Structure probing data (2A3 and DMS) for a 177-nucleotide construct.
RNA sequence: GGGAACGACUCGAGUAGAGUCGAAAAGCUAUAUGUGCCACCUUACAGUGAUACCCAGCUGCCACCAAAGGGCAACGUUUCCUCCUUAAAGUUUGGAAGAUCUCAGAGCUGAAUUUGAGCCUGCACAGCUAUACCACUGGUUCGCCAGUGGUAUAGCAAAAGAAACAACAACAACAAC
Reactivity to 2A3 in 0.01 (KOAc 150mM, MgCl2 10mM, bicine 150mM(pH8.5), 24C), signal-to-noise 2, nucleotides 027 to 126: g000c020u030a020u030a050u300g000u020g030c000c010a050c010c020u000u190a050c010a010g020u060g070a020u090a150c010c030c000a010g040c000u030g050c000c030a050c000c060a080a080a050g090g020g000c030a090a000c020g000u030u050u020c000c000u000c000c000u130u110a170a160a060g080u140u100u030g090g040a080a020g020a020u020c040u000c100a020g020a000g030c020u050g030a150a060u140u020u120g010a010g010c030c000u010g010c000a030c040a080
Reactivity to DMS in 0.01 (KOAc 150mM, MgCl2 10mM, bicine 150mM(pH8.5), 24C), signal-to-noise 3, nucleotides 027 to 126: g000c010u010a080u000a080u010g010u000g010c010c010a030c050c050u000u010a090c080a130g030u010g030a100u000a120c040c070c070a100g010c000u000g010c020c000a090c070c100a060a090a110g020g020g000c060a030a070c090g010u000u000u000c030c030u000c020c020u000u010a080a090a090g010u000u000u000g000g010a110a120g010a060u000c050u010c040a080g010a100g020c020u010g010a080a080u000u000u000g000a080g010c090c020u000g020c130a090c170a110
For DMS, 1,735 sequencing reads were counted. Source: RMDB library OK2TRN, as collected in RNAgym.